[RMDB]
RNA sequence: GGGAACGACUCGAGUAGAGUCGAAAAUUCACUGAGACACUUACAAGCUGAGGUGAAGUGUCAGCACCACUUCUUGCUGGAAUGACCUCAGCAACAAGCCACGCCUCUAGUUUGAUGGAAGCAGGUAGCAUAGUGAGCCAUUCGUGGCUCACUAUGCAAAAGAAACAACAACAACAAC
Reactivity to 2A3 in 0.01 (KOAc 150mM, MgCl2 10mM, bicine 150mM(pH8.5), 24C), signal-to-noise 2, nucleotides 027 to 126: u050u040c010a040c040u090g070a020g030a030c010a000c030u000u110a050c050a110a090g020c000u000g000a000g000g000u030g030a070a020g000u010g050u000c000a030g010c010a050c050c040a200c070u150u070c060u130u250g000c000u010g010g090a160a040u040g060a060c010c000u000c000a000g040c020a020a000c020a000a000g050c030c010a080c080g040c050c000u080c040u010a130g130u170u130u210g170a140u160g000g030a010a020g000c030a020g090g000u060a010
Reactivity to DMS in 0.01 (KOAc 150mM, MgCl2 10mM, bicine 150mM(pH8.5), 24C), signal-to-noise 2, nucleotides 027 to 126: u000u000c000a080c080u020g000a100g030a040c000a030c000u020u010a140c140a150a130g000c000u000g070a000g020g010u000g000a070a040g010u000g010u000c020a060g020c010a100c230c080a100c170u010u010c070u000u010g040c010u000g000g000a080a050u000g000a060c020c000u000c010a010g010c010a100a050c130a050a100g000c020c040a040c130g010c060c010u000c010u010a080g010u020u000u010g010a110u000g000g010a030a070g030c030a130g030g000u000a060

An RNA of 177 nucleotides, treated with 2A3 and DMS and read out base by base. It was measured as part of the RMDB library OK2TST. Values cover nucleotides 27 to 126. Values are in units of 0.01, from 0 to 300, in steps of 10. DMS adducts were read by reverse transcription with MarathonRT. For DMS, 1,198 sequencing reads were counted.